[RMDB]
RNA sequence: GGGAACGACUCGAGUAGAGUCGAAAACCUAUCCAAAAUGAGAUCCCAUCUUGCACACUGUGCUAAUUUGAGAUUCUCAUGCCUCCUACUUGGAGAGAUCUGGACUAGAAGUCAGGGCAGCUGACUCAAUACAUUCGUCAGUUCGCUGACGAAUGAAUCAUACUCUCGACUUCGGUCGAGAGUAUGAAAAAGAAACAACAACAACAAC
Reactivity to 2A3 in 0.01 (KOAc 150mM, MgCl2 10mM, bicine 150mM(pH8.5), 24C), signal-to-noise 6, nucleotides 027 to 156: c010c000u020a060u050c020c020a040a080a040a050u020g000a000g000a010u000c000c000c000a010u010c000u020u010g000c010a030c050a100c230u300g010u010g020c040u140a040a070u010u000u020g030a030g000a020u300u080c010u000c020a010u020g010c000c000u030c000c010u110a280c120u170u280g000g000a010g000a020g010a080u060c080u090g030g010a020c020u040a090g030a150a000g080u010c010a000g010g070g300c100a080g070c020u010g000a010c000u000c020a030a070u120a110c010a010u000u010c000g000u000c000a010g010u020u100c140g000c100u010g000a000c000g000a000a000u010g020a000a010
Reactivity to DMS in 0.01 (KOAc 150mM, MgCl2 10mM, bicine 150mM(pH8.5), 24C), signal-to-noise 2, nucleotides 027 to 156: c020c010u000a090u000c000c020a000a090a120a180u000g010a030g030a060u000c000c020c020a040u000c130u010u000g000c000a020c030a260c200u020g020u000g040c000u000a010a000u000u000u010g010a020g000a030u010u020c060u000c020a050u000g020c060c000u000c010c000u000a170c190u000u000g020g000a040g000a120g030a030u000c100u000g000g000a110c110u000a080g020a140a040g010u000c020a010g000g030g000c140a100g000c020u000g020a080c030u020c050a080a090u000a160c060a020u000u000c000g000u000c000a000g060u000u020c300g050c010u000g020a000c000g000a000a000u000g000a080a140
Structure probing data (2A3 and DMS) for a 207-nucleotide construct. For 2A3, 3,810 sequencing reads were counted. For DMS the reverse transcriptase was MarathonRT. 2A3 adducts were read by reverse transcription with SuperScript II with manganese. Reactivities are given for positions 27 through 156. The reactions ran in a buffer of 150 mM KOAc, 10 mM MgCl2 and 150 mM bicine (pH 8.5), at 24 C.